[RMDB]
RNA sequence: GGGAACGACUCGAGUAGAGUCGAAAACGGAUUGGGGGGACACUAACCCCCCCGCGCUCAGUAACGGCACGGCCGCGGCCCCGACGGGACGCAACGCCGUGAGGCUCGCGAACUGCCGCCUCAGCUCAGAAGAUACGUUAUUCGUAACGUAUCUUCUAAAAGAAACAACAACAACAAC
Reactivity to DMS in 0.01 (KOAc 150mM, MgCl2 10mM, bicine 150mM(pH8.5), 24C), signal-to-noise 9, nucleotides 027 to 126: c050g010g010a160u000u010g010g010g010g010g000g010a110c130a140c260u020a120a130c080c000c000c000c000c000c020g010c170g000c060u000c120a050g010u010a090a090c050g000g010c010a030c110g010g020c110c100g000c010g000g000c010c010c000c070g010a070c120g010g010g000a070c080g010c120a060a110c160g000c010c000g010u000g000a060g010g000c020u010c080g010c020g000a080a130c100u000g000c050c030g000c050c020u000c040a070g000c070u000c130
Reactivity to 2A3 in 0.01 (KOAc 150mM, MgCl2 10mM, bicine 150mM(pH8.5), 24C), signal-to-noise 7, nucleotides 027 to 126: c030g040g070a120u150u160g040g000g000g000g010g010a020c040a010c230u100a080a090c000c000c000c000c000c010c000g010c000g000c010u040c010a040g030u040a100a040c020g020g000c000a010c060g050g000c030c020g010c000g000g000c020c000c000c010g140a060c070g000g010g030a030c060g030c180a090a080c070g040c020c010g000u020g000a010g000g010c060u090c130g000c000g020a070a050c030u050g010c010c010g000c010c010u040c010a010g010c030u050c040
Structure probing data (DMS and 2A3) for a 177-nucleotide construct. DMS adducts were read by reverse transcription with MarathonRT. It was measured as part of the RMDB library OK2TST.